[RMDB]
An RNA of 177 nucleotides, treated with 2A3 and DMS and read out base by base.

RNA sequence: GGGAACGACUCGAGUAGAGUCGAAAAGUACAAGCUAAGAAUUGACCACUGAUAGGGAAUCCACCCAAAUGUUUACUUUCAGGGAUACCUGUUUUUUGUAAUAAUGGAAUCGCUCCACCGCCAGCACUACGCAGUGUAAUUUCGAUUACACUGCGUAAAAAGAAACAACAACAACAAC
Reactivity to 2A3 in 0.01 (KOAc 150mM, MgCl2 10mM, bicine 150mM(pH8.5), 24C), signal-to-noise 1, nucleotides 027 to 126: g030u030a080c020a080a010g050c040u120a090a040g060a210a230u150u050g050a170c020c020a050c110u030g070a080u090a090g000g000g080a000a100u000c020c000a100c010c010c020a000a080a100u160g000u000u050u120a050c010u020u050u050c060a030g000g000g080a080u120a160c000c000u020g020u000u010u000u010u030u230g170u090a050a130u030a050a020u070g060g010a080a040u110c000g000c000u000c000c000a000c050c010g000c000c000a030g000c000a020c060
Reactivity to DMS in 0.01 (KOAc 150mM, MgCl2 10mM, bicine 150mM(pH8.5), 24C), signal-to-noise 3, nucleotides 027 to 126: g000u000a070c090a060a080g010c070u000a110a110g010a090a090u000u010g000a120c090c020a060c100u010g010a100u010a060g000g000g020a130a080u000c060c060a130c030c020c030a040a110a040u000g010u000u000u000a030c070u000u010u010c030a020g010g010g000a120u010a110c030c010u000g020u000u000u000u000u010u010g020u000a040a030u000a080a080u000g000g010a070a070u010c070g000c060u020c020c050a050c040c030g030c020c060a060g010c100a060c150

The 2A3 profile rests on 799 reads. Values are in units of 0.01, from 0 to 300, in steps of 10.